[RMDB]
RNA sequence: GGGAACGACUCGAGUAGAGUCGAAAACUCCGCUUCGGCGGAGAAAAAAGCGUACUACUUUGAGGUUGUGGGAGACGUGGGUCCCAAAUAGGACCCUUAUCGUCGAGGAUCACAACUCCCCACCAAAGUAUCGCAAAAAGAUGGGUUCGCCCAUCAACAUAAAAGUCUUGUUCGCAAGACUUUUAUGAAAAGAAACAACAACAACAAC
Reactivity to 2A3 in 0.01 (KOAc 150mM, MgCl2 10mM, bicine 150mM(pH8.5), 24C), signal-to-noise 2, nucleotides 027 to 156: c000u010c010c000g040c000u060u080c190g150g000c000g020g040a020g000a100a040a000a010a000a010g050c050g010u090a110c040u000a000c000u030u000u010g020a040g060g000u020u020g000u040g010g010g010a030g000a000c010g020u050g000g010g010u020c010c000c020a080a180a060u190a050g000g000a000c000c000c000u000u100a160u100c010g000u000c000g020a110g030g000a020u060c010a000c000a000a020c000u110c040c010c020c000a030c010c000a020a030a000g000u010a020u300c050g000c030a000a000a070a000a070g000a010u020g000g000g070u030u100c180g170c030c010c000a000u000c000a010a010
Reactivity to DMS in 0.01 (KOAc 150mM, MgCl2 10mM, bicine 150mM(pH8.5), 24C), signal-to-noise 2, nucleotides 027 to 156: c000u010c000c000g030c000u000u010c300g070g030c000g000g000a040g000a020a010a070a100a110a110g000c010g020u000a080c060u000a020c010u010u000u000g010a150g050g010u010u000g040u000g010g000g010a060g020a030c020g040u010g020g020g020u000c000c000c000a030a100a170u000a020g000g000a010c000c000c010u000u000a030u000c020g040u000c050g000a070g010g020a070u000c000a020c030a030a060c030u010c080c090c020c000a300c130c010a000a050a020g030u000a030u000c040g000c010a040a080a090a060a100g010a030u000g000g010g000u000u010c110g030c000c020c000a020u000c000a030a170